The record gives the reactivity of an RNA of 177 nucleotides to DMS and 2A3. DMS adducts were read by reverse transcription with MarathonRT. The reactions ran in a buffer of 150 mM KOAc, 10 mM MgCl2 and 150 mM bicine (pH 8.5), at 24 C.
RNA sequence: GGGAACGACUCGAGUAGAGUCGAAAAUGGUGCUCCAGAUGAUGCCUCUCGGUUACUUCAUACCGUGCUUGCAAAGGCUGAGUUAUGCUGUUCUGCACGCAUGGUUUGGAGAGAGUGGUGCAAUGUCGAAGAACGUUGUGUUCGCACAACGUUCUUCAAAAGAAACAACAACAACAAC
Reactivity to DMS in 0.01 (KOAc 150mM, MgCl2 10mM, bicine 150mM(pH8.5), 24C), signal-to-noise 1, nucleotides 027 to 126: u000g020g030u000g000c060u010c010c030a090g010a080u010g000a180u000g000c010c000u000c020u000c010g050g020u030u000a110c000u000u000c000a010u000a010c000c010g060u000g020c010u000u000g010c010a020a060a160g000g010c000u000g000a220g050u020u000a100u000g010c010u000g030u000u000c190u000g000c000a030c080g000c010a010u000g000g020u000u000u010g000g000a010g000a100g000a030g000u000g010g030u020g020c070a030a090u000g000u000c070
Reactivity to 2A3 in 0.01 (KOAc 150mM, MgCl2 10mM, bicine 150mM(pH8.5), 24C), signal-to-noise 1, nucleotides 027 to 126: u100g030g000u040g050c020u010c010c010a030g010a150u150g020a020u080g050c000c000u000c020u000c000g130g000u120u070a060c000u000u050c000a010u000a020c010c000g010u000g010c000u000u030g020c000a040a020a020g020g060c000u030g030a050g280u190u110a060u110g000c000u030g160u140u020c040u070g000c000a000c020g020c000a000u000g000g030u000u010u010g000g000a010g000a010g000a000g000u020g000g050u010g010c030a060a060u080g060u110c030